[RMDB]
RNA sequence: GGGAACGACUCGAGUAGAGUCGAAAAGAUAUGGACCCGUAGAGCGAUAAGAUACGGAACUAGCCAUAUUUCGGAAACGAAAUGAUGGCUAGUUCCGUAUCUUUUGACGCUUGAAGGGUCCUAAGUCCGAAUGAAUAUCGUUCGCGAUAUUCAUUCGAAAAGAAACAACAACAACAAC
Reactivity to DMS in 0.01 (KOAc 150mM, MgCl2 10mM, bicine 150mM(pH8.5), 24C), signal-to-noise 5, nucleotides 027 to 126: g010a090u010a300u000g010g010a010c000c000c000g000u000a300g000a020g010c000g020a150u000a020a010g010a030u000a000c010g000g010a030a010c000u000a020g010c020c000a010u000a090u000u000u000c010g010g010a110a120a250c010g020a010a000a010u000g010a010u000g000g000c000u000a000g000u000u010c000c000g010u010a000u000c000u000u000u000u010g020a210c060g010c010u000u000g000a250a300g010g000g010u000c000c000u000a010a100g000u010c060
Chemical mapping of a 177-nucleotide RNA with DMS. It was measured as part of the RMDB library TTRINS. The RNA was probed in 150 mM KOAc, 10 mM MgCl2 and 150 mM bicine (pH 8.5) at 24 C.